[RMDB]
RNA sequence: GGGAACGACUCGAGUAGAGUCGAAAAGGGAGCAGCUGGAAGGGCGGGAAGCUGCCUGCCCGUAAUAUCAUCACGGGGAAGGACAACAGGGAUAACCCCGGCACUGGCGAGGAGAGGCAGAGCCAGGGCUUAACGCUCAUUUCGAUGAGCGUUAAGCAAAAGAAACAACAACAACAAC
Reactivity to 2A3 in 0.01 (KOAc 150mM, MgCl2 10mM, bicine 150mM(pH8.5), 24C), signal-to-noise 3, nucleotides 027 to 126: g010g010g010a030g020c020a000g000c020u040g020g060a070a050g090g010g040c130g020g010g000a030a030g020c020u020g020c000c010u040g040c010c000c010g010u030a040a060u120a080u190c120a020u080c040a020c030g000g020g010g010a040a030g050g000a040c020a180a020c020a140g040g020g000a020u060a110a080c000c000c000c000g000g010c030a050c040u010g040g000c020g030a060g000g050a090g020a030g050g000c030a010g000a000g030c000c010a000g030g010
Reactivity to DMS in 0.01 (KOAc 150mM, MgCl2 10mM, bicine 150mM(pH8.5), 24C), signal-to-noise 5, nucleotides 027 to 126: g010g010g030a130g010c020a050g020c030u000g000g010a130a140g000g000g010c120g020g010g000a070a060g010c050u000g010c030c030u000g020c010c000c000g020u000a040a090u020a100u010c120a110u010c110a080c050g020g010g010g010a100a050g010g000a070c110a120a100c110a080g010g000g000a130u010a090a160c040c000c010c040g010g020c110a040c030u000g010g010c050g010a110g010g010a100g000a090g010g000c070a050g000a270g010c020c020a040g020g000
The data come from the RNA Mapping Database (RMDB), library OK2TST.
Chemical mapping of a 177-nucleotide RNA with 2A3 and DMS.
The RNA was probed in 150 mM KOAc, 10 mM MgCl2 and 150 mM bicine (pH 8.5) at 24 C.
As a SHAPE reagent, 2A3 marks flexible, mostly unpaired nucleotides at the ribose 2'-OH.
The 2A3 profile rests on 6,225 reads.
Values cover nucleotides 27 to 126.